RNA sequence: GGGAACGACUCGAGUAGAGUCGAAAAUCCCGGGGCCGAUUGGGAGGAUACCGGAGAUCGAUAGACGACAGCAGCGCGCUUGCGCUUCUGCUCGACUGCGCGGCCCGCGAAGCCCCGAGGUGUCGCGCACCAAGUUACUUUUCGAAGUAACUUGGUGAAAAGAAACAACAACAACAAC
Reactivity to DMS in 0.01 (KOAc 150mM, MgCl2 10mM, bicine 150mM(pH8.5), 24C), signal-to-noise 9, nucleotides 027 to 126: u000c000c000c000g010g000g000g030c030c010g000a300u010u010g010g010g000a170g000g000a150u030a210c120c020g000g000a090g020a100u020c040g000a130u020a050g010a150c030g000a060c010a020g000c060a010g010c040g020c010g020c290u030u040g010c000g010c000u000u000c010u000g010c150u000c010g010a070c030u010g000c020g010c030g000g000c020c010c010g000c040g010a240a200g000c020c000c010c010g010a080g000g010u000g010u000c050g010c090g010
Reactivity to 2A3 in 0.01 (KOAc 150mM, MgCl2 10mM, bicine 150mM(pH8.5), 24C), signal-to-noise 9, nucleotides 027 to 126: u030c000c000c010g000g000g000g000c040c030g100a140u100u140g040g020g020a070g090g030a090u080a150c020c010g020g030a100g020a150u100c030g020a030u050a100g080a040c030g010a020c010a000g020c010a000g000c010g000c010g040c190u200u300g000c010g000c000u020u000c000u010g020c070u010c000g020a020c020u050g010c050g000c010g030g010c000c010c000g010c020g010a020a010g010c000c000c000c000g010a070g000g020u090g020u040c040g000c010g000